[RMDB]
RNA sequence: GGGAACGACUCGAGUAGAGUCGAAAAUCGACCACACCGUCAUCGGCUGCAGCCUGGUACGCGGCACACCGUAUCGGUACAUCGGUCAAACCCUGGAGCAGAGGGCGGAAUGCGACGGCUGGCCGGCUCGUCUACCUCUGUUCGCAGAGGUAGACGAAAAAGAAACAACAACAACAAC
Reactivity to 2A3 in 0.01 (KOAc 150mM, MgCl2 10mM, bicine 150mM(pH8.5), 24C), signal-to-noise 2, nucleotides 027 to 126: u040c020g050a000c000c010a020c000a000c010c000g070u090c040a080u100c020g050g030c050u070g030c030a010g020c020c010u090g090g020u010a060c060g000c010g090g000c070a020c010a030c050c020g060u110a040u130c000g060g010u050a040c040a100u130c090g030g000u030c030a020a030a130c040c020c000u060g100g020a060g050c040a010g020a060g030g070g000c060g020g060a140a060u130g020c040g030a020c000g020g000c000u000g070g060c000c020g020g020c010
Reactivity to DMS in 0.01 (KOAc 150mM, MgCl2 10mM, bicine 150mM(pH8.5), 24C), signal-to-noise 2, nucleotides 027 to 126: u010c090g030a060c000c020a130c160a070c040c000g000u000c090a110u010c030g000g010c230u000g010c020a050g000c030c050u010g030g000u010a040c150g010c060g000g040c050a070c150a160c040c040g030u000a060u000c020g010g010u010a060c140a090u000c030g000g020u000c030a050a110a170c030c010c020u000g010g030a120g010c040a050g020a060g010g000g020c020g010g000a080a080u000g000c040g000a050c000g000g020c150u020g020g030c060c020g000g000c090
This 177-nucleotide RNA was probed chemically with 2A3 and DMS. For DMS the reverse transcriptase was MarathonRT. 2A3 is a SHAPE reagent: it acylates the 2'-hydroxyl of flexible nucleotides of all four kinds. The data come from the RNA Mapping Database (RMDB), library OK2TST.